[RMDB]
RNA sequence: GGGAACGACUCGAGUAGAGUCGAAAAGGACUCAACUUCGGUUGAGUCCAAAGAAUUCCGGUGGACUCCGGAGAAACAAAGUCAAUACAAAAAUUAAAAUAAAAAGGGCGUACUUCGGUACGCCCAACCAUAGAAGCUAGUUCGCUAGCUUCUAUGGAAAAGAAACAACAACAACAAC
Reactivity to 2A3 in 0.01 (KOAc 150mM, MgCl2 10mM, bicine 150mM(pH8.5), 24C), signal-to-noise 1, nucleotides 027 to 126: g000g000a000c000u000c000a000a000c000u030u130c220g030g000u010u010g000a050g030u030c000c000a000a000a000g000a000a030u180u000c010c000g000g030u000g120g010a050c090u090c300c000g020g000a010g030a000a040a000c010a020a020a000g030u030c010a040a030u250a250c030a090a120a020a100a040u300u280a280a170a180a050u300a030a010a000a130a050g000g010g020c000g000u000a020c030u030u100c190g020g000u000a000c000g000c020c000c000a000a000